RNA sequence: GGGAACGACUCGAGUAGAGUCGAAAACAAUUAAUUGGCCAGAAAGCUGUUUGGUCUGGCUGUCCAGUCUCUUGUUUAGACUGGCCACCAUUAAUAGCAAGUGCCGUGGUAUGUGUUUUACCCUAAACCCCUCAAUUCACUGCUAGGUCCAGGCUGCAUCUAGGUUUGAAUUCGUUCAAACCUAGAUAAAAGAAACAACAACAACAAC
Reactivity to DMS in 0.01 (KOAc 150mM, MgCl2 10mM, bicine 150mM(pH8.5), 24C), signal-to-noise 2, nucleotides 027 to 156: c040a100a130u010u010a040a100u010u010g020g000c000c020a120g010a070a170a160g020c030u000g030u000u010u010g010g020u000c020u000g000g000c040u000g000u000c010c020a020g020u000c010u010c100u000u000g020u000u020u000a030g010a000c000u010g010g000c070c100a070c050c030a090u010u000a040a060u010a060g030c010a110a170g020u000g000c050c010g020u010g010g020u000a070u030g020u000g020u010u000u000u010a070c010c000c020u000a080a140a260c050c020c010c040u010c060a060a070u000u000c030a060c010u010g000c030u010a100g020g030u000c050c060a060g000g030c020u000g010c120
Reactivity to 2A3 in 0.01 (KOAc 150mM, MgCl2 10mM, bicine 150mM(pH8.5), 24C), signal-to-noise 3, nucleotides 027 to 156: c000a010a010u100u280a070a080u150u160g030g000c010c010a030g150a110a080a020g040c040u040g060u080u060u030g110g010u050c070u030g050g000c060u020g020u000c000c000a000g030u010c000u000c000u120u290g060u200u190u070a010g000a000c000u000g020g000c010c000a020c010c000a020u150u160a030a090u030a060g050c080a140a020g030u040g070c020c070g020u050g030g010u120a130u110g060u020g050u030u060u090u050a060c050c000c000u050a110a140a130c000c030c010c000u040c030a040a080u150u010c020a020c060u050g000c000u020a020g020g070u000c010c040a010g000g020c030u030g000c010